The data come from the RNA Mapping Database (RMDB), library OK1LIB.
An RNA of 177 nucleotides, treated with 2A3 and DMS and read out base by base.
The RNA was probed in 150 mM KOAc, 10 mM MgCl2 and 150 mM bicine (pH 8.5) at 24 C.
2A3 adducts were read by reverse transcription with SuperScript II with manganese.
RNA sequence: GGGAACGACUCGAGUAGAGUCGAAAAGGAUGACACUAGUGGGUUAGCAUGUUUCCUCGUUGGCGAUCGCGAGCCUAGUAUGACGGAGCGCCGAUAGAGUGGUGGCAUCAAUGCUGUACACAGGCUGACAUGUAAGGUCGUUCGCGAUCUUGCAUGUAAAAGAAACAACAACAACAAC
Reactivity to 2A3 in 0.01 (KOAc 150mM, MgCl2 10mM, bicine 150mM(pH8.5), 24C), signal-to-noise 9, nucleotides 027 to 126: g090g010a050u110g030a020c020a010c060u070a040g060u080g060g070g010u060u070a030g030c040a040u030g020u010u050u010c010c000u010c020g030u030u060g020g000c020g020a050u050c050g020c030g170a040g030c010c010u050a070g060u070a090u170g060a040c050g020g010a040g010c020g000c010c010g040a060u080a080g080a010g030u090g040g010u030g030g000c000a010u050c030a040a070u120g000c010u030g020u070a030c060a010c010a040g060g000c020u040g030
Reactivity to DMS in 0.01 (KOAc 150mM, MgCl2 10mM, bicine 150mM(pH8.5), 24C), signal-to-noise 9, nucleotides 027 to 126: g000g010a050u010g000a070c040a040c040u010a080g020u010g000g000g010u010u010a070g000c050a050u010g010u010u010u000c020c010u010c050g010u010u010g000g010c030g000a050u010c040g010c070g010a110g010c060c050u010a110g010u020a080u020g010a100c080g000g000a060g010c040g010c010c020g010a040u010a070g010a060g010u010g010g020u010g000g000c020a040u010c080a060a070u020g010c010u000g000u010a080c090a070c100a110g000g000c030u010g000